[RMDB]
RNA sequence: GGGAACGACUCGAGUAGAGUCGAAAAUGUGAAAGAGACAAGCAUGAGGGGCCAGCCUUGCUUUAUAACAACCCAUGAUUGAGAUAACUCACUCACUGCUAUGAGAAUGCAUUAAUCCAUUCAUCAAGGCAGAGCCAUCACAAUCCAGGCACCUCCAUCCUAUUUAGUCGUUCGCGACUAAAUAGGAAAAAGAAACAACAACAACAAC
Reactivity to DMS in 0.01 (KOAc 150mM, MgCl2 10mM, bicine 150mM(pH8.5), 24C), signal-to-noise 2, nucleotides 027 to 156: u020g070u000g000a090a130a130g000a140g050a110c010a080a130g020c080a080u010g010a090g010g000g030g050c000c010a050g030c000c010u020u020g000c040u010u010u000a060u000a100a050c040a040a090c030c050c050a140u020g000a100u010u000g030a070g030a110u000a100a120c040u000c070a080c070u000c050a130c180u040g000c030u000a180u000g010a200g020a000a050u020g030c110a270u000u010a100a150u000c100c010a020u000u000c030a080u010c040a020a300g050g030c010a050g010a070g030c000c030a080u000c050a060c050a000a080u000c010c060a140g010g000c040a050c020c010u010c000c010a230
Reactivity to 2A3 in 0.01 (KOAc 150mM, MgCl2 10mM, bicine 150mM(pH8.5), 24C), signal-to-noise 2, nucleotides 027 to 156: u060g020u010g020a040a090a030g070a020g000a060c030a070a030g040c030a020u060g050a060g050g010g000g000c030c040a040g000c030c010u050u040g040c020u110u140u060a130u080a050a020c050a040a070c020c010c000a000u080g010a060u010u060g000a060g020a070u130a150a110c050u030c110a030c000u030c010a030c010u030g020c010u010a020u110g030a030g020a010a000u020g010c030a040u110u230a090a070u110c020c000a000u020u020c010a040u020c020a100a060g060g010c030a000g000a010g040c050c030a060u040c010a020c030a050a030u090c020c040a010g020g000c050a040c020c000u060c040c000a020